The record gives the reactivity of an RNA of 177 nucleotides to 2A3 and DMS. DMS adducts were read by reverse transcription with MarathonRT. The RNA was probed in 150 mM KOAc, 10 mM MgCl2 and 150 mM bicine (pH 8.5) at 24 C. As a SHAPE reagent, 2A3 marks flexible, mostly unpaired nucleotides at the ribose 2'-OH.

RNA sequence: GGGAACGACUCGAGUAGAGUCGAAAAGAGCGUCGCCAUACGUAGCACUUCAUCCAGUGCGAUACCGCAAUGUUCGACCAGAUUACGCACGCCUUCAAUCAUGGUUAAGGAUGAACCGCUUAACGUAUAGCACCCUACUAUUCGUAGUAGGGUGCUAAAAAGAAACAACAACAACAAC
Reactivity to 2A3 in 0.01 (KOAc 150mM, MgCl2 10mM, bicine 150mM(pH8.5), 24C), signal-to-noise 2, nucleotides 027 to 126: g080a010g030c030g070u060c030g090c040c010a000u000a040c020g000u010a000g000c000a010c050u010u030c000a030u030c000c000a020g000u010g020c010g020a050u070a060c060c050g020c070a050a210u160g070u170u120c030g010a080c000c070a030g030a100u080u180a070c050g000c050a040c040g030c040c050u040u170c070a120a160u090c070a170u180g000g060u080u100a120a000g020g010a020u030g020a000a020c040c030g000c050u060u140a020a010c010g020u040a010
Reactivity to DMS in 0.01 (KOAc 150mM, MgCl2 10mM, bicine 150mM(pH8.5), 24C), signal-to-noise 4, nucleotides 027 to 126: g010a070g000c040g020u000c060g000c060c060a140u000a000c030g040u000a060g000c010a070c160u000u000c020a010u000c020c030a210g020u000g000c020g010a200u010a050c130c070g000c080a070a090u000g020u010u030c120g020a070c060c050a070g000a060u000u010a100c080g000c050a060c060g000c030c020u020u010c110a090a050u010c120a030u010g010g020u000u010a080a160g020g000a030u000g010a030a030c180c080g000c010u000u010a050a040c030g020u010a050